The data come from the RNA Mapping Database (RMDB), library OK3TST. The record gives the reactivity of an RNA of 207 nucleotides to 2A3 and DMS. The 2A3 profile rests on 1,256 reads. For DMS, 2,317 sequencing reads were counted. DMS adducts were read by reverse transcription with MarathonRT. In probing experiments dimethyl sulfate is read out at A N1 and C N3, which are open when not base-paired.

RNA sequence: GGGAACGACUCGAGUAGAGUCGAAAACAACCUGGGAGUUACGUCCGGAUAUUGCCCCAGGAGCAAUAGAACGGUAGACAUCAACUGAUGCGAGAGCAUCUCAACUUAUGGACCUUAGUGUAUCGCAAGACGACAGGUCCGGUCGGAAUUGCGUAGAGACUCGGUAGUAUUUCGAUACUACCGAGUCAAAAGAAACAACAACAACAAC
Reactivity to 2A3 in 0.01 (KOAc 150mM, MgCl2 10mM, bicine 150mM(pH8.5), 24C), signal-to-noise 3, nucleotides 027 to 156: c020a000a030c000c010u040g040g000g000a220g050u090u050a040c060g010u050c060c000g030g020a080u040a030u070u080g000c010c000c000c010a080g070g030a030g040c010a020a080u100a080g080a160a030c020g010g030u030a020g020a070c040a060u100c010a020a090c080u120g000a000u000g030c000g010a060g000a030g070c000a020u000c010u010c050a090a140c050u140u090a040u250g020g020a010c000c010u030u180a080g050u020g070u160a080u180c020g010c080a040a020g010a050c040g010a020c020a030g030g030u040c000c020g030g010u010c010g000g030a140a070u060u030g020c010g000u080a040g010a030
Reactivity to DMS in 0.01 (KOAc 150mM, MgCl2 10mM, bicine 150mM(pH8.5), 24C), signal-to-noise 2, nucleotides 027 to 156: c020a110a270c010c000u000g010g020g010a140g060u020u000a030c070g010u000c020c000g000g040a180u000a090u000u000g020c000c010c030c120a210g020g000a120g010c020a040a040u000a050g000a100a120c000g000g000u000a160g000a060c110a170u000c040a040a150c070u000g020a060u000g040c000g020a220g030a300g070c000a010u000c030u000c040a030a120c120u010u000a040u000g060g000a060c010c000u000u010a140g010u020g040u000a060u000c040g010c080a030a110g000a150c050g000a060c120a030g010g030u030c010c000g010g000u000c030g000g000a080a080u010u000g020c000g050u000a120g030a300